Source: RMDB library OK3TST, as collected in RNAgym. The record gives the reactivity of an RNA of 207 nucleotides to DMS and 2A3.

RNA sequence: GGGAACGACUCGAGUAGAGUCGAAAAUCAUUGACUUCCAUUUGAAAGGCCGUGCCAGCCAGGCCCACUGACUGAGCAGCUGAGGAGCCCCAGCCAGCAAAAGGCAGGAUGUGGUUAAAACUGUGCUCUGAUCCUAUCUCUGGCCUCAGGAAACCUACGCGAUUAAUUUAUUCGUAAAUUAAUCGCGAAAAGAAACAACAACAACAAC
Reactivity to DMS in 0.01 (KOAc 150mM, MgCl2 10mM, bicine 150mM(pH8.5), 24C), signal-to-noise 2, nucleotides 027 to 156: u010c060a150u020u000g010a080c030u000u000c010c020a270u000u000u000g030a150a130a070g030g010c000c020g030u020g020c020c010a080g000c020c010a050g020g010c100c080c080a300c020u000g000a030c020u000g050a220g030c050a090g020c060u000g030a130g020g010a200g010c010c020c010c000a050g010c030c010a100g070c050a040a130a100a110g030g040c020a070g010g000a050u020g000u020g020g020u000u000a080a090a060a110c060u000g020u000g030c000u010c010u010g000a080u010c020c020u010a110u000c040u000c030u010g040g010c050c040u000c030a100g000g010a070a080a120c050c000u000a160
Reactivity to 2A3 in 0.01 (KOAc 150mM, MgCl2 10mM, bicine 150mM(pH8.5), 24C), signal-to-noise 3, nucleotides 027 to 156: u120c020a050u040u190g050a060c020u110u020c040c010a150u110u050u120g180a210a140a040g000g000c020c020g060u050g000c000c010a010g010c010c020a020g010g020c000c000c000a050c030u070g060a060c000u010g010a010g040c030a030g010c050u040g030a080g070g070a070g030c010c040c010c000a010g010c000c030a030g000c030a100a170a050a040g040g020c000a000g020g040a040u080g030u080g060g020u030u070a070a090a020a060c030u050g040u090g040c010u020c030u030g060a100u020c020c000u050a070u100c030u020c020u080g020g000c000c000u020c030a030g060g000a050a060a010c120c030u200a030
2A3 is a SHAPE reagent: it acylates the 2'-hydroxyl of flexible nucleotides of all four kinds.
The reactions ran in a buffer of 150 mM KOAc, 10 mM MgCl2 and 150 mM bicine (pH 8.5), at 24 C.
For DMS the reverse transcriptase was MarathonRT.
2A3 adducts were read by reverse transcription with SuperScript II with manganese.